[RMDB]
RNA sequence: GGGAACGACUCGAGUAGAGUCGAAAAACUCAAAAGAUACACGUCAAUUUGUCAAAUCAAUUGCUAAAGAUGCACAUCGCAUUGGUCAAGAUAACGAUAUUUAUGCGUCUGUCAUGAUUGCCCAAGCCGCUUAGAAUUCUUUCGAGAAUUCUAAGCGAAAAGAAACAACAACAACAAC
Reactivity to DMS in 0.01 (KOAc 150mM, MgCl2 10mM, bicine 150mM(pH8.5), 24C), signal-to-noise 3, nucleotides 027 to 126: a100c050u000c010a050a080a120a100g010a100u000a060c110a020c060g020u010c060a050a100u000u000u000g030u000c060a070a120a080u010c040a030a080u020u000g020c070u010a060a060a100g010a030u000g000c060a070c130a050u020c140g000c030a030u000u020g020g000u010c070a050a080g000a030u020a070a050c120g000a060u000a060u000u000u010a100u010g030c050g020u000c090u010g000u000c030a060u000g020a040u010u000g020c020c000c010a080a100g020c180
Reactivity to 2A3 in 0.01 (KOAc 150mM, MgCl2 10mM, bicine 150mM(pH8.5), 24C), signal-to-noise 3, nucleotides 027 to 126: a000c040u040c030a080a060a030a040g050a030u100a030c050a010c060g090u070c040a060a060u060u040u060g020u060c010a000a050a190u010c020a040a160u070u060g000c010u150a140a060a040g050a030u060g010c040a030c030a200u100c100g000c020a020u000u080g040g000u040c010a040a060g040a130u050a060a060c050g010a020u010a080u070u140u050a080u100g010c030g020u010c050u030g010u010c020a030u040g030a050u030u130g050c000c000c000a020a060g080c040